[RMDB]
RNA sequence: GGGAACGACUCGAGUAGAGUCGAAAAGCGUACUACCAUUGGUUUGAGCAACAGCAUAUCUUGUCAGUAUAUCCCAAAUAGGAUAUACUUGGAUUUAGAUAUGACAUGCUUGAUCAAUGGUAUCGCAAAUCCGCUGUGUGUUCGCACACAGCGGAAAGAUGUAUACUAAGUUCGCUUAGUAUACAUCAAAAGAAACAACAACAACAAC
Reactivity to DMS in 0.01 (KOAc 150mM, MgCl2 10mM, bicine 150mM(pH8.5), 24C), signal-to-noise 3, nucleotides 027 to 156: g010c010g020u000a040c110u000a000c010c000a020u010u000g010g020u000u000u000g030a010g020c000a040a100c090a240g010c010a030u000a010u000c000u010u000g010u000c010a040g010u000a010u000a010u000c000c000c010a060a160a230u010a040g000g010a020u000a000u000a000c000u000u000g020g010a020u000u000u000a010g010a030u000a000u000g000a040c090a300u010g010c010u000u000g000a020u000c010a010a020u000g000g000u000a000u000c000g010c010a100a060a090u000c000c000g030c000u000g000u000g030u000g020u000u010c300g040c000a020c000a000c000a010g000c000g000g000a000a010a050
Reactivity to 2A3 in 0.01 (KOAc 150mM, MgCl2 10mM, bicine 150mM(pH8.5), 24C), signal-to-noise 9, nucleotides 027 to 156: g020c010g030u100a100c060u010a000c010c000a010u000u010g090g070u060u080u300g030a010g000c020a020a140c040a130g060c000a010u000a000u000c000u010u020g010u010c000a000g020u000a000u000a010u040c010c030c020a150a300a140u300a100g000g000a000u000a000u000a000c000u020u100g050g010a020u250u230u150a000g000a000u000a000u010g140a090c020a040u030g000c000u000u010g000a000u010c000a000a000u000g000g000u000a000u010c000g000c000a040a060a040u000c000c000g000c000u000g000u000g000u000g010u030u080c180g040c090a000c000a000c000a000g000c000g000g000a010a000a000